[RMDB]
RNA sequence: GGGAACGACUCGAGUAGAGUCGAAAACAGUGAGAGUCCCACACACGACUGGACUUCCAUAUCGAGCCACAGCUAUCAACGAAUUUGCUGGCAAGAUGUAGGCAGUUCAGUUGUGCGUUUAUGGAGACCAAAAGGUUUACCGUUCGCGGUAAACCAACUUUCUGUCUGGUUUCGACCAGACAGAAAGAAAAGAAACAACAACAACAAC
Reactivity to DMS in 0.01 (KOAc 150mM, MgCl2 10mM, bicine 150mM(pH8.5), 24C), signal-to-noise 1, nucleotides 027 to 156: c020a060g000u040g000a070g000a140g020u020c000c000c010a170c040a000c030a050c000g030a020c010u010g020g000a020c010u010u000c000c030a090u000a090u010c000g000a300g010c000c070a070c060a100g010c100u000a180u000c180a150a270c210g020a090a030u000u000u010g090c120u020g010g020c040a030a300g010a050u000g030u000a090g110g020c030a050g000u000u000c010a020g010u000u010g050u000g030c030g010u000u010u010a140u000g010g010a240g000a090c010c000a030a220a110a090g050g030u000u000u000a010c000c000g040u010u000c300g080c000g010g020u000a000a000a000c000c000a000a010
Reactivity to 2A3 in 0.01 (KOAc 150mM, MgCl2 10mM, bicine 150mM(pH8.5), 24C), signal-to-noise 4, nucleotides 027 to 156: c050a020g060u070g150a120g030a020g080u000c010c000c000a000c000a000c000a000c000g000a000c000u010g000g000a000c000u010u000c000c000a020u020a010u040c010g000a010g000c020c030a070c050a060g010c030u060a050u150c060a120a240c120g130a210a100u090u090u190g000c040u010g000g000c010a010a020g010a010u020g000u050a170g000g020c010a000g000u000u000c000a000g000u000u000g000u000g000c000g000u000u040u020a150u070g070g020a160g020a090c050c020a020a050a110a100g000g000u000u000u000a000c000c010g040u030u050c230g000c000g060g000u000a000a010a000c000c000a010a010

Record summary: Chemical mapping of a 207-nucleotide RNA with DMS and 2A3. The 2A3 profile rests on 2,878 reads. For DMS, 1,989 sequencing reads were counted.